Structure probing data (DMS and 2A3) for a 177-nucleotide construct.
The RNA was probed in 150 mM KOAc, 10 mM MgCl2 and 150 mM bicine (pH 8.5) at 24 C.
For DMS, 4,317 sequencing reads were counted.
RNA sequence: GGGAACGACUCGAGUAGAGUCGAAAAGAUAUGGAGCCAGACAUGCUCUCACCUCGGAAACGAGGUAGUGAGCAACAGCUGGUCUCCUAAGUCAAAAGUGGUAUCAAACUUCGGUUUGAUACCACAAGAUUACCGGUAUGUUCGCAUACCGGUAAUCAAAAGAAACAACAACAACAAC
Reactivity to DMS in 0.01 (KOAc 150mM, MgCl2 10mM, bicine 150mM(pH8.5), 24C), signal-to-noise 4, nucleotides 027 to 126: g000a050u000a300u010g000g000a010g000c000c010a000g010a060c110a240u010g010c010u010c000u000c010a030c000c000u010c000g010g000a100a080a190c000g000a010g000g010u010a030g020u000g000a020g010c010a040a060c270a130g000c010u000g000g000u010c010u000c010c000u000a030a080g010u020c030a060a080a140a130g000u000g000g000u000a000u000c000a000a010a000c000u000u010c190g030g000u000u000u000g000a010u000a010c000c000a000c000a000a020
Reactivity to 2A3 in 0.01 (KOAc 150mM, MgCl2 10mM, bicine 150mM(pH8.5), 24C), signal-to-noise 3, nucleotides 027 to 126: g030a010u080a030u150g000g010a000g010c010c000a000g020a080c040a100u120g010c000u000c000u000c020a010c000c010u000c000g010g050a100a090a060c020g020a000g040g000u060a090g010u000g000a010g020c020a010a010c040a010g050c000u010g020g020u050c000u000c000c000u010a090a020g020u040c040a010a030a080a150g000u000g010g000u020a000u000c000a000a010a000c010u060u110c300g070g000u000u000u000g000a000u000a010c010c000a000c000a000a000